[RMDB]
RNA sequence: GGGAACGACUCGAGUAGAGUCGAAAAACUGAGUUGUUCGCAACUCAGUCUAGGAGGUCGGCGCCGGCCCCCGCCAUCCGCGCCCCCCACGGGAAGGAAGCAUAAAGUUCGUCUUCGGACGAACUAACCUAUAAUGAAGAUUCGUCUUCAUUAUAGGAAAAGAAACAACAACAACAAC
Reactivity to 2A3 in 0.01 (KOAc 150mM, MgCl2 10mM, bicine 150mM(pH8.5), 24C), signal-to-noise 4, nucleotides 027 to 126: a010c000u000g000a000g000u010u020g030u090u130c190g000c110a000a000c000u000c000a000g000u010c020u030a080g000g080a050g020g020u090c040g030g060c060g040c110c070g040g030c000c000c000c010c000g020c030c000a070u040c020c010g060c020g060c040c020c000c000c000c010a010c020g010g010g020a020a040g030g020a040a010g030c010a030u110a160a200a000g010u000u000c000g010u020c010u020u050c170g050g000a000c000g010a000a000c000u000a000a000
Reactivity to DMS in 0.01 (KOAc 150mM, MgCl2 10mM, bicine 150mM(pH8.5), 24C), signal-to-noise 7, nucleotides 027 to 126: a040c000u000g000a010g010u000u000g000u000u010c190g020c010a010a000c000u000c000a000g000u000c040u000a090g010g010a050g010g020u000c050g010g010c110g030c090c040g000g000c020c010c010c040c030g010c080c040a080u010c020c040g010c070g020c020c010c010c010c010c010a110c100g010g000g000a060a050g000g010a070a080g020c100a100u010a070a090a030g010u000u000c000g010u000c000u000u010c200g010g000a010c000g000a000a010c000u000a020a060